[RMDB]
RNA sequence: GGGAACGACUCGAGUAGAGUCGAAAAUUAUUGAUUGGUGCUGUCGGUGUCACUGUUUGUGGCGUCACUGUGGUAUCAUCACCAACGCCAUUAACCAAGUCACGAUUAAACUUGUCACGUGAUACACAGACAACAAGAAUUUCGAUUCUUGUUGUCUAAAAGAAACAACAACAACAAC
Reactivity to DMS in 0.01 (KOAc 150mM, MgCl2 10mM, bicine 150mM(pH8.5), 24C), signal-to-noise 9, nucleotides 027 to 126: u010u010a100u010u000g010a100u000u000g010g020u000g010c060u000g010u010c060g010g010u000g000u000c020a030c030u000g010u000u000u000g020u000g010g000c010g000u000c080a070c180u010g010u010g010g010u000a070u010c160a080u010c050a040c040c180a090a050c050g000c020c020a020u000u010a050a090c060c050a070a060g000u000c030a050c100g000a120u010u010a090a100a060c100u010u000g000u000c140a090c110g010u010g000a030u000a060c160a100c210
Reactivity to 2A3 in 0.01 (KOAc 150mM, MgCl2 10mM, bicine 150mM(pH8.5), 24C), signal-to-noise 9, nucleotides 027 to 126: u110u060a060u060u090g090a060u030u070g010g000u030g020c030u030g050u090c060g060g010u030g010u030c010a000c030u030g080u170u080u110g050u040g010g000c020g020u030c040a030c100u110g010u050g050g030u080a080u240c050a050u060c010a050c020c010a020a010c030g010c020c010a020u030u060a030a020c020c020a060a020g030u040c020a010c090g080a060u050u200a090a070a090c060u060u070g040u120c050a010c100g020u030g010a000u050a040c080a000c020